[RMDB]
RNA sequence: GGGAACGACUCGAGUAGAGUCGAAAAUUUCUUACCGCAGUCACCGUACAAAUACUGACAUUGUCACGCACAGUAAUGCGUCGCGUGGCCUUGUCGAAUUCAAAGAAACAACAGCUCGCUGGACGCAGUCCAGUCGUCACUUCGGUGACGACUGGACAAAAGAAACAACAACAACAAC
Reactivity to DMS in 0.01 (KOAc 150mM, MgCl2 10mM, bicine 150mM(pH8.5), 24C), signal-to-noise 2, nucleotides 027 to 126: u000u000u010c010u010u000a090c040c010g040c070a060g040u000c010a080c050c020g060u010a140c160a100a080a080u050a180c200u050g000a000c000a020u000u000g010u000c000a000c030g000c000a090c030a090g000u010a120a100u030g010c300g000u000c210g030c000g000u000g010g040c000c000u030u000g000u000c010g010a020a120u070u030c110a000a000a010g000a000a000a000c050a000a000c010a030g300c050u020c100g000c000u000g000g010a000c040g040c070a070
Reactivity to 2A3 in 0.01 (KOAc 150mM, MgCl2 10mM, bicine 150mM(pH8.5), 24C), signal-to-noise 5, nucleotides 027 to 126: u020u030u000c010u010u090a090c000c020g030c020a010g010u050c020a010c060c010g020u090a070c090a060a140a030u170a120c100u130g000a000c000a000u010u010g000u000c000a000c000g010c000a000c010a020g050u210a140a090u200g060c060g070u060c060g000c000g000u000g000g000c000c000u000u000g000u010c000g000a010a060u110u090c050a000a010a020g060a020a030a000c010a010a000c000a010g000c000u050c070g080c050u100g040g000a040c030g020c080a040